This 177-nucleotide RNA was probed chemically with DMS and 2A3. The 2A3 profile rests on 13,036 reads. The reactions ran in a buffer of 150 mM KOAc, 10 mM MgCl2 and 150 mM bicine (pH 8.5), at 24 C.
[RMDB]
RNA sequence: GGGAACGACUCGAGUAGAGUCGAAAACAACACGUCUUCGGACGUGUUGAAACGUGGUGCGUACGAUAACGCAUAAAAAGCCCAAGACAAGCAGGGCAAAAAAAACAACCAGCUUCGGCUGGUUGAACACCAUACUAAAGUUCGCUUUAGUAUGGUGAAAAGAAACAACAACAACAAC
Reactivity to DMS in 0.01 (KOAc 150mM, MgCl2 10mM, bicine 150mM(pH8.5), 24C), signal-to-noise 6, nucleotides 027 to 126: c000a000a010c000a010c000g000u000c000u000u020c230g030g000a010c000g010u010g000u000u000g000a050a080a240c010g010u000g030g040u000g000c000g010u000a040c020g020a110u010a020a000c020g010c000a010u000a060a060a070a120a110g010c000c000c000a120a130g010a300c180a060a110g010c180a100g000g010g010c030a000a000a000a030a020a020a060a080c010a000a010c000c000a000g000c010u000u010c220g050g010c000u000g000g010u010u000g000a040a110
Reactivity to 2A3 in 0.01 (KOAc 150mM, MgCl2 10mM, bicine 150mM(pH8.5), 24C), signal-to-noise 4, nucleotides 027 to 126: c000a000a000c000a000c010g010u020c020u050u060c180g140g000a000c000g000u010g000u000u010g010a010a010a000c010g000u040g110g000u010g060c010g010u020a010c000g020a060u040a080a010c000g010c010a000u050a010a050a010a010a000g010c020c010c010a050a030g120a110c070a090a040g110c100a140g000g000g000c000a020a000a000a030a020a000a000a020c000a000a000c000c000a000g010c000u030u060c080g160g000c000u000g000g010u010u000g000a000a000